An RNA of 177 nucleotides, treated with 2A3 and DMS and read out base by base.
For DMS, 1,857 sequencing reads were counted.
For DMS the reverse transcriptase was MarathonRT.
Source: RMDB library OK2TST, as collected in RNAgym.
2A3 adducts were read by reverse transcription with SuperScript II with manganese.

RNA sequence: GGGAACGACUCGAGUAGAGUCGAAAACAGGACAUCAACAAGGCUCUCAUGAAAGGUUCGUCGGUGACACAAGAUGAACUGGAGCGAGCUUCCAGACAACUGCUUGCCAUGACACAGUGGUGGAAGAUGUUACCAGGGAAUUCGUUCCCUGGUAACAAAAAGAAACAACAACAACAAC
Reactivity to 2A3 in 0.01 (KOAc 150mM, MgCl2 10mM, bicine 150mM(pH8.5), 24C), signal-to-noise 2, nucleotides 027 to 126: c040a020g060g020a020c010a020u080c030a080a070c030a080a060g080g000c000u010c010u010c030a080u110g080a140a030a000g080g000u000u010c010g000u010c020g060g130u140g160a020c030a010c020a160a020g010a040u020g010a030a000c000u030g000g050a000g020c040g010a020g010c000u000u000c000c000a030g040a080c080a140a040c060u020g030c050u070u050g030c030c080a220u160g050a070c010a000c010a100g000u030g050g010u000g030g020a030a030g040a050
Reactivity to DMS in 0.01 (KOAc 150mM, MgCl2 10mM, bicine 150mM(pH8.5), 24C), signal-to-noise 3, nucleotides 027 to 126: c040a070g030g010a060c100a020u010c050a080a070c190a110a050g000g000c030u000c040u010c080a100u030g020a070a150a150g020g000u010u000c030g000u000c030g000g000u010g040a090c240a100c120a040a110g030a040u000g000a040a040c010u000g000g030a050g010c110g010a060g010c050u000u000c000c050a080g040a120c090a110a070c020u000g010c060u010u010g020c030c080a070u000g010a130c110a070c090a050g030u000g010g000u000g000g000a050a040g000a110